[RMDB]
RNA sequence: GGGAACGACUCGAGUAGAGUCGAAAACUUUCCAAGAAUUCCUUUGAUGUUUCCCAGCCAGGGAUUGUCUUCCUCUAGUUUCUUGAUCUUCUUCUUGGCCUUCCGGAGAUCCUUCUCGAGAUCAUCCUACCAGUCCGUUUCGACGGACUGAAAAGAAACAACAACAACAAC
Reactivity to DMS in 0.01 (KOAc 150mM, MgCl2 10mM, bicine 150mM(pH8.5), 24C), signal-to-noise 6, nucleotides 027 to 129: c190u010u010u010c040c020a120a120g030a150a120u000u000c020c000u040u030u040g000a020u030g020u010u030u000c010c000c010a090g020c090c070a060g030g030g010a030u000u020g030u030c050u030u030c030c000u020c060u020a100g040u000u000u000c020u010u010g030a100u020c070u050u010c000u020u020c040u020u030g010g070c080c020u000u000c070c060g000g000a080g020a090u020c060c020u000u000c000u020c000g050a000g040a100u020c020a090u040c010c020u040a060c000
Reactivity to 2A3 in 0.01 (KOAc 150mM, MgCl2 10mM, bicine 150mM(pH8.5), 24C), signal-to-noise 6, nucleotides 027 to 129: c010u080u090u040c020c020a020a010g080a030a100u080u120c010c000u070u060u140g060a070u070g030u020u040u030c020c000c010a010g040c020c030a040g030g040g030a050u030u130g030u010c000u030u040c000c000u020c010u020a070g040u070u090u020c000u020u070g060a090u030c020u050u000c000u020u000c000u030u040g040g020c000c000u040u020c040c010g020g010a050g000a020u030c000c000u040u040c000u010c010g040a030g040a220u010c010a070u000c010c000u000a110c010
This 170-nucleotide RNA was probed chemically with DMS and 2A3. 2A3 adducts were read by reverse transcription with SuperScript II with manganese. It was measured as part of the RMDB library 15KLIB. For DMS, 24,351 sequencing reads were counted. The RNA was probed in 150 mM KOAc, 10 mM MgCl2 and 150 mM bicine (pH 8.5) at 24 C. Reactivities are rounded to 0.1 and cut off at 0 and 3.